[RMDB]
About this RNA:
Chemical mapping of a 207-nucleotide RNA with 2A3 and DMS. The reactions ran in a buffer of 150 mM KOAc, 10 mM MgCl2 and 150 mM bicine (pH 8.5), at 24 C. The 2A3 profile rests on 5,344 reads. Values are in units of 0.01, from 0 to 300, in steps of 10. For 2A3 the reverse transcriptase was SuperScript II with manganese.

RNA sequence: GGGAACGACUCGAGUAGAGUCGAAAAAGUACGUCGCUGGGAAACUAUGGCUGUUACAAGGGAGCGAUCUGAAGCGCGCACGGAUCGCAUCGAUCUUGUACCGAAGCCAAGUUUCCUGUGCUGAAGCGCGCACGGCAACCGAAAGGUGCGUUAAUAAGAUUCUCUUCAAGUUCGCUUGAAGAGAAUCAAAAGAAACAACAACAACAAC
Reactivity to 2A3 in 0.01 (KOAc 150mM, MgCl2 10mM, bicine 150mM(pH8.5), 24C), signal-to-noise 4, nucleotides 027 to 156: a000g140u120a040c100g080u030c010g030c020u020g010g000g000a000a000a000c010u050a230u300g000g000c020u030g060u120u010a000c000a000a000g010g000g000a030g020c000g000a000u000c000u020g040a170a030g010c010g000c000g000c010a010c010g020g000a000u000c010g000c010a030u300c000g000a000u000c000u000u020g010u010a020c050c080g190a110a010g000c000c000a000a000g000u010u000u000c000c000u000g000u000g000c000u010g020a160a040g000c000g000c000g000c010a020c000g010g000c010a010a000c000c010g050a110a020a020g040g000u000g000c000g010u030u040a040a040u140a100a030
Reactivity to DMS in 0.01 (KOAc 150mM, MgCl2 10mM, bicine 150mM(pH8.5), 24C), signal-to-noise 2, nucleotides 027 to 156: a090g030u000a060c070g000u000c030g010c030u000g000g000g020a050a030a040c020u000a180u000g070g050c000u000g010u000u010a030c020a060a010g010g000g000a030g030c000g040a010u000c010u010g010a040a070g030c020g040c030g000c010a300c070g000g000a020u000c010g030c030a170u000c140g000a040u000c000u000u010g000u000a050c260c120g010a080a020g000c020c000a020a010g000u000u000u000c000c000u000g000u000g020c030u000g000a040a030g060c000g000c010g020c010a300c040g010g010c000a060a090c020c000g000a080a120a160g040g020u000g000c020g000u000u000a060a110u010a080a270